[RMDB]
This 177-nucleotide RNA was probed chemically with DMS and 2A3. Reactivities are rounded to 0.1 and cut off at 0 and 3. DMS adducts were read by reverse transcription with MarathonRT. The data come from the RNA Mapping Database (RMDB), library RFM100.

RNA sequence: GGGAACGACUCGAGUAGAGUCGAAAAUUCCUCCUCCUGACUGAGUGCACAAGGCCCGCUUGGUUGAUUCGGAUACCUAUUCGAAGCCACCGGGGCCUUGUUGGCACCGCAGCAAACAGGACGCGUCACCGUGUAAGCCGUUCGCGGCUUACACGGUAAAAGAAACAACAACAACAAC
Reactivity to DMS in 0.01 (KOAc 150mM, MgCl2 10mM, bicine 150mM(pH8.5), 24C), signal-to-noise 1, nucleotides 027 to 126: u030u030c000c030u000c070c100u050c010c020u000g030a180c020u000g000a300g000u010g000c000a030c010a000a000g000g010c020c000c020g050c120u040u010g010g000u000u010g000a130u000u000c000g020g000a000u000a120c140c300u040a020u020u000c000g010a010a030g000c080c040a000c000c000g020g000g000g000c010c000u000u000g000u000u030g000g000c000a000c000c020g000c040a030g000c210a050a100a160c020a070g000g030a010c220g000c070g020u040c030
Reactivity to 2A3 in 0.01 (KOAc 150mM, MgCl2 10mM, bicine 150mM(pH8.5), 24C), signal-to-noise 2, nucleotides 027 to 126: u000u000c000c000u000c000c000u000c000c000u050g140a250c000u000g000a040g000u000g010c000a000c000a000a000g000g000c000c010c060g280c070u080u160g010g000u000u090g100a260u010u010c000g000g000a050u220a300c020c110u180a080u000u000c000g000a000a020g020c030c020a020c010c010g000g000g010g000c000c000u000u000g000u000u000g020g000c000a020c000c030g020c010a000g000c000a000a000a110c050a050g000g000a000c100g070c020g140u150c050